[RMDB]
The data come from the RNA Mapping Database (RMDB), libraries RFM100 and RFMREP. This 177-nucleotide RNA was probed chemically with 2A3 and DMS. As a SHAPE reagent, 2A3 marks flexible, mostly unpaired nucleotides at the ribose 2'-OH. Reactivities are rounded to 0.1 and cut off at 0 and 3. Reactivities are given for positions 27 through 126. 2A3 adducts were read by reverse transcription with SuperScript II with manganese. The RNA was probed in 150 mM KOAc, 10 mM MgCl2 and 150 mM bicine (pH 8.5) at 24 C.
RNA sequence: GGGAACGACUCGAGUAGAGUCGAAAAUCAAUUUCUAUGCUAUGCCAAAGUGUCUGACAUAAUCAAACAUUUGCGCAUUCUUUGACCAAGAAUAGUCAGCAAAUUGUAUUUUCAAUCAAUGCAGACCCACGAAUGGUACGUUCGCGUACCAUUCGUGAAAAGAAACAACAACAACAAC
Reactivity to 2A3 in 0.01 (KOAc 150mM, MgCl2 10mM, bicine 150mM(pH8.5), 24C), signal-to-noise 4, nucleotides 027 to 126: u070c010a010a050u020u070u000c020u040a100u120g040c000u040a030u130g090c010c020a120a060a010g050u060g000u040c000u020g030a160c010a080u090a040a090u180c090a080a050a060c010a000u010u000u020g020c020g000c000a020u010u030c000u030u010u110g070a040c040c010a000a000g020a000a010u120a090g110u220c160a050g020c000a010a000a040u060u120g070u080a150u030u070u050u120c140a110a090u060c010a020a000u030g020c000a000g010a010c020c010
Reactivity to DMS in 0.01 (KOAc 150mM, MgCl2 10mM, bicine 150mM(pH8.5), 24C), signal-to-noise 2, nucleotides 027 to 126: u020c050a020a060u010u030u000c030u010a100u010g000c070u000a020u020g020c020c040a100a080a070g010u010g010u000c010u000g000a030c080a070u010a110a100u030c210a060a030a040c000a050u000u000u000g000c060g020c000a030u000u010c000u010u040u010g020a150c300c150a070a020g010a030a030u010a030g050u020c070a140g080c020a000a000a000u060u010g010u030a030u070u000u000u000c200a060a070u000c160a070a020u000g010c040a010g070a030c000c100